An RNA of 177 nucleotides, treated with 2A3 and DMS and read out base by base. Conditions: 150 mM KOAc, 10 mM MgCl2 and 150 mM bicine (pH 8.5), 24 C. DMS (dimethyl sulfate) methylates the pairing face of unpaired adenines and cytosines. For DMS, 6,243 sequencing reads were counted. For 2A3 the reverse transcriptase was SuperScript II with manganese. For 2A3, 4,332 sequencing reads were counted. The data come from the RNA Mapping Database (RMDB), library M2PK50.
RNA sequence: GGGAACGACUCGAGUAGAGUCGAAAAGUGCGACAUUUCGAUGUCGCACAAACCCAAAUGGUGGCACCUAACUAAACAAGCCGGGAAAAGCCAGAUGCGAACGUCCUUAGCCCUUCGGGGCUAAGAAAUACCCAUAUAGGUUCGCCUAUAUGGGUAUAAAAGAAACAACAACAACAAC
Reactivity to 2A3 in 0.01 (KOAc 150mM, MgCl2 10mM, bicine 150mM(pH8.5), 24C), signal-to-noise 2, nucleotides 027 to 126: g010u010g000c010g010a000c000a010u050u050u090c190g110a000u020g000u000c000g040c000a000c000a010a010a010c000c000c000a020a070a030u120g020g010u020g010g000c060a300c230c000u050a090a100c030u100a160a090a120c070a160a030g000c050c080g010g030g010a090a130a010a000g020c020c030a040g010a090u130g050c060g070a080a030c030g110u090c010c000u000u000a000g020c000c030c000u010u030c170g060g000g030g000c000u010a000a000g010a010a010
Reactivity to DMS in 0.01 (KOAc 150mM, MgCl2 10mM, bicine 150mM(pH8.5), 24C), signal-to-noise 5, nucleotides 027 to 126: g010u000g000c000g010a020c000a010u000u000u020c170g010a020u000g020u000c000g010c000a000c000a000a100a130c000c000c000a110a090a110u010g000g010u000g010g020c140a100c020c030u000a080a090c090u000a080a090a150c110a090a070g020c030c040g020g000g010a060a070a120a160g000c040c020a060g000a100u000g000c090g010a060a050c120g000u000c090c000u000u000a010g000c000c000c010u010u010c200g000g000g010g000c000u000a000a010g000a040a090